[RMDB]
RNA sequence: GGGAACGACUCGAGUAGAGUCGAAAAGAUAUGGAUGCGCCCGGCAGGGAGCACCUCGGAAACGAGAGUGCUUUGAUCUGUCGCAUCCUAAGUCAAACUCGUGAAUAAGUUCGCUUAUUCACGAGAACUCUCCAUAUUGCUUCGGCAAUAUGGAGAGAAAAGAAACAACAACAACAAC
Reactivity to DMS in 0.01 (KOAc 150mM, MgCl2 10mM, bicine 150mM(pH8.5), 24C), signal-to-noise 1, nucleotides 027 to 126: g000a050u000a040u020g000g000a010u000g000c030g000c300c060c180g000g020c230a100g000g010g030a010g020c000a000c010c000u000c000g030g000a070a050a060c000g010a000g010a130g010u000g040c000u000u010u010g000a080u000c000u000g000u000c000g020c000a020u000c010c000u000a020a080g000u000c010a130a110a170c000u000c000g020u030g000a020a000u000a020a000g000u020u010c260g050c010u000u000a010u000u000c000a020c000g010a000g000a030a110
Reactivity to 2A3 in 0.01 (KOAc 150mM, MgCl2 10mM, bicine 150mM(pH8.5), 24C), signal-to-noise 1, nucleotides 027 to 126: g000a010u070a000u060g000g010a000u000g010c010g040c120c140c010g100g000c220a300g240g040g050a010g030c010a020c000c000u000c000g010g010a070a000a000c010g000a010g010a020g010u000g000c000u010u020u080g070a060u000c000u000g020u010c000g010c000a010u030c010c000u000a080a000g030u000c050a030a080a110c000u000c010g000u000g000a000a020u020a010a010g110u050u180c260g000c170u010u010a000u030u000c010a000c000g010a000g000a000a000